[RMDB]
RNA sequence: GGGAACGACUCGAGUAGAGUCGAAAAACUGCGGUAUUCGUACCGCAGUACAUAAAAAGGAUAAAAUACCAGUAGCCCGAAACGCAAGCGUGCACUACUGGCGCAAGAACCACUUCGGUGGUUCUAAGCAGAGAUAAUCAUUCGUGAUUAUCUCUGCAAAAGAAACAACAACAACAAC
Reactivity to 2A3 in 0.01 (KOAc 150mM, MgCl2 10mM, bicine 150mM(pH8.5), 24C), signal-to-noise 8, nucleotides 027 to 126: a000c010u010g000c010g000g010u020a030u030u080c160g030u040a020c000c000g000c000a000g000u000a000c000a010u300a030a130a020a020a010g150g020a080u210a190a170a080a030u170a120c010c010a010g010u000a010g030c020c040c080g050a140a170a010c060g000c100a060a110g120c050g110u110g020c040a010c060u020a000c000u020g020g000c020g020c030a040a000g000a000a000c000c000a000c010u050u070c220g090g000u000g000g000u000u000c000u000a010a000
Reactivity to DMS in 0.01 (KOAc 150mM, MgCl2 10mM, bicine 150mM(pH8.5), 24C), signal-to-noise 8, nucleotides 027 to 126: a030c000u000g010c000g010g010u000a010u000u010c160g020u000a010c000c010g020c000a000g000u010a020c120a060u000a040a070a080a100a090g010g010a130u010a060a060a070a110u010a080c000c000a010g010u000a010g000c180c070c030g010a060a070a040c110g010c140a110a110g000c060g010u000g010c150a220c010u000a000c010u000g000g010c100g010c150a110a030g000a010a010c000c000a010c000u000u010c200g020g020u000g000g000u000u000c000u000a050a100
The record gives the reactivity of an RNA of 177 nucleotides to 2A3 and DMS. The data come from the RNA Mapping Database (RMDB), library M2PK50. The RNA was probed in 150 mM KOAc, 10 mM MgCl2 and 150 mM bicine (pH 8.5) at 24 C. For 2A3 the reverse transcriptase was SuperScript II with manganese.